[RMDB]
RNA sequence: GGGAACGACUCGAGUAGAGUCGAAAAGAAUGUAAGCGCGUAAUCGCGCCUUGACGUGAGUGAGACAAGACAGAAGGCUAUCCAAAGUAAGAUAGCAUAGCUCACAAUACGCUGAUCUGUCAUAGAAAAAUACGGCUACUUUCGAGUAGCCGUAUUUAAAAGAAACAACAACAACAAC
Reactivity to 2A3 in 0.01 (KOAc 150mM, MgCl2 10mM, bicine 150mM(pH8.5), 24C), signal-to-noise 3, nucleotides 027 to 126: g130a050a040u240g000u180a000a070g000c040g010c010g120u160a050a160u250c030g040c000g000c000c000u140u100g030a000c020g000u000g020a010g010u000g000a030g050a150c040a150a060g010a000c010a080g100a080a000g100g010c000u010a000u020c020c030a160a160a000g160u200a000a190g080a010u000a000g000c000a000u060a030g010c000u030c000a010c040a020a000u190a010c070g040c140u150g000a060u000c000u000g000u000c010a000u130a150g180a060a150
Reactivity to DMS in 0.01 (KOAc 150mM, MgCl2 10mM, bicine 150mM(pH8.5), 24C), signal-to-noise 3, nucleotides 027 to 126: g000a140a040u070g020u010a100a170g020c000g000c010g010u020a130a150u020c030g000c000g010c040c090u050u030g030a160c050g010u010g000a140g020u000g020a070g050a050c240a120a140g000a030c140a030g010a080a130g000g000c020u020a000u000c020c110a110a140a110g030u000a110a050g000a000u000a000g000c030a030u000a090g000c000u000c020a030c020a090a040u010a080c050g010c070u000g000a090u000c010u000g010u000c010a130u050a070g000a000a060